[RMDB]
The record gives the reactivity of an RNA of 177 nucleotides to DMS and 2A3. Values are in units of 0.01, from 0 to 300, in steps of 10.
RNA sequence: GGGAACGACUCGAGUAGAGUCGAAAAAAUAGCGAUAGGUGUCUUCUGGACACCCAACAUCAUACAAUUGCAACGCACUCCGCUGCCUGUCAAGUACUGGCGGUGGAGAGUAGGCUGAUUUGUAAUUGAUACAUAUGUCUUUCGAGACAUAUGUAUCAAAAGAAACAACAACAACAAC
Reactivity to DMS in 0.01 (KOAc 150mM, MgCl2 10mM, bicine 150mM(pH8.5), 24C), signal-to-noise 6, nucleotides 027 to 126: a080a060u030a050g000c070g010a110u000a030g000g010u010g000u000c000u000u040c300u030g020g000a010c000a000c000c000c060a050a060c150a070u030c130a110u020a060c080a020a040u020u010g010c010a080a060c060g000c020a130c000u000c000c010g000c000u000g000c010c000u000g000u010c040a130a140g010u040a040c000u000g000g010c000g020g030u000g010g000a010g000a010g000u000a100g010g020c020u000g010a080u010u010u010g000u000a040a150u000u010
Reactivity to 2A3 in 0.01 (KOAc 150mM, MgCl2 10mM, bicine 150mM(pH8.5), 24C), signal-to-noise 9, nucleotides 027 to 126: a000a000u250a030g030c060g050a050u060a060g000g000u010g000u010c010u170u110c210u300g110g000a000c000a000c000c000c000a060a070c010a070u170c020a020u050a140c040a040a090u080u100g010c010a040a030c030g000c010a020c000u000c000c000g000c010u000g000c000c000u030g030u030c090a270a110g030u080a150c010u030g000g000c000g000g010u010g000g000a000g000a000g010u010a030g020g000c010u040g060a150u040u030u060g060u030a090a110u030u020
It was measured as part of the RMDB libraries RFM100 and RFMREP.